Chemical mapping of a 177-nucleotide RNA with 2A3 and DMS. The data come from the RNA Mapping Database (RMDB), libraries RFM100 and RFMREP. For DMS the reverse transcriptase was MarathonRT.

RNA sequence: GGGAACGACUCGAGUAGAGUCGAAAAUAGUCGGGUAAGAAUCCCGAUGGCCGAAAGAGCAAGGGUUCCUCGGCAAUGCUUAUCAGCCGAGGGUUAGCCGAUCCUAAGGCCCGUCGUAAUUCGAGCGCUUUGGAUAAGUAUUCGUACUUAUCCAAAGAAAAGAAACAACAACAACAAC
Reactivity to 2A3 in 0.01 (KOAc 150mM, MgCl2 10mM, bicine 150mM(pH8.5), 24C), signal-to-noise 9, nucleotides 027 to 126: u080a010g040u010c010g000g020g020u070a250a110g090a140a090u100c000c000c000g000a020u030g010g000c000c010g040a090a100a010g040a020g020c130a080a120g090g000g020u080u050c000c000u000c000g000g000c060a060a060u120g050c100u230u240a120u280c070a050g160c010c000g010a010g000g000g010u040u040a020g040c000c000g020a090u020c000c000u040a070a030g000g010c000c000c000g040u050c010g030u050a070a150u070u060c030g000a020g060c050g000
Reactivity to DMS in 0.01 (KOAc 150mM, MgCl2 10mM, bicine 150mM(pH8.5), 24C), signal-to-noise 9, nucleotides 027 to 126: u010a110g020u000c000g000g010g030u000a100a170g010a190a120u010c000c020c000g010a010u010g010g020c000c000g000a090a220a100g000a040g010c140a100a150g010g010g010u000u020c000c010u000c000g010g000c010a140a080u020g000c220u020u020a110u030c170a150g020c000c000g000a030g000g000g000u010u020a060g010c000c000g000a100u000c010c010u020a090a300g000g000c000c010c110g010u010c050g000u020a120a110u000u000c020g000a090g010c140g010